[RMDB]
RNA sequence: GGGAACGACUCGAGUAGAGUCGAAAAGCAGCACACAGAAGACCACGCACCUUGCCGGUAACGUGGUCAUGGUCGAUGUGCGGCCCGGUCUUGUGUCCCCAGCCUGAGAGAGUGACGCUGCAAAUGGAACCUUCCGUCUAUUCGUAGACGGAAGGUUAAAAGAAACAACAACAACAAC
Reactivity to DMS in 0.01 (KOAc 150mM, MgCl2 10mM, bicine 150mM(pH8.5), 24C), signal-to-noise 4, nucleotides 027 to 126: g010c090a060g000c000a130c000a020c060a170g000a130a120g010a000c000c000a000c000g010c300a060c020c000u010u070g020c180c200g000g040u000a160a180c020g000u000g000g000u000c000a010u040g010g030u010c110g010a180u010g040u010g000c000g000g000c000c010c050g010g000u000c030u000u000g010u030g000u010c020c000c000c030a150g010c050c020u020g000a080g010a040g030a050g010u000g020a170c180g010c040u000g020c050a050a090a060u020g000g010
Reactivity to 2A3 in 0.01 (KOAc 150mM, MgCl2 10mM, bicine 150mM(pH8.5), 24C), signal-to-noise 5, nucleotides 027 to 126: g030c040a000g020c040a000c000a000c010a030g120a240a010g010a110c010c000a010c000g010c000a010c020c000u130u280g130c140c050g040g000u080a180a050c000g030u010g000g000u000c000a000u010g000g020u030c030g030a150u080g080u080g170c000g000g010c000c000c000g050g020u060c040u050u170g030u010g020u040c000c000c010c010a020g070c000c030u170g000a100g000a000g000a000g070u040g010a050c100g000c000u030g020c050a060a100a070u160g090g060